Structure probing data (2A3) for a 207-nucleotide construct.
RNA sequence: GGGAACGACUCGAGUAGAGUCGAAAAGCGUCAUUGUAAAGGAAUGGGGCAUGGAGACAUUCAUUGAGGACGAGGAUAAUAUUAGAUUUACUGUCUACCUAAAUUUCGUUGAACCGGAGGAAUUGAAUCUUAGUAAGUUUAUGAUGGUUCUUCCGGGCACCACGAGCAUAUUCGUAUGCUCGUGGUGAAAAGAAACAACAACAACAAC
Reactivity to 2A3 in 0.01 (KOAc 150mM, MgCl2 10mM, bicine 150mM(pH8.5), 24C), signal-to-noise 2, nucleotides 027 to 156: g030c010g130u050c130a120u060u080g100u180a050a180a110g100g020a040a050u120g010g000g010g000c050a030u060g040g010a060g010a020c030a070u090u040c030a030u010u090g090a010g030g000a000c010g010a030g000g020a020u060a120a010u030a080u080u080a020g030a100u000u090u050a080c020u110g020u080c040u040a060c000c000u050a240a140a110u150u210u190c040g010u030u020g010a080a040c000c010g000g000a000g000g000a000a000u020u030g080a100a020u000c000u000u030a030g050u110a170a120g030u120u080u060a070u120g000a000u030g010g000u010u000c000u000u000c000c000g000g000g020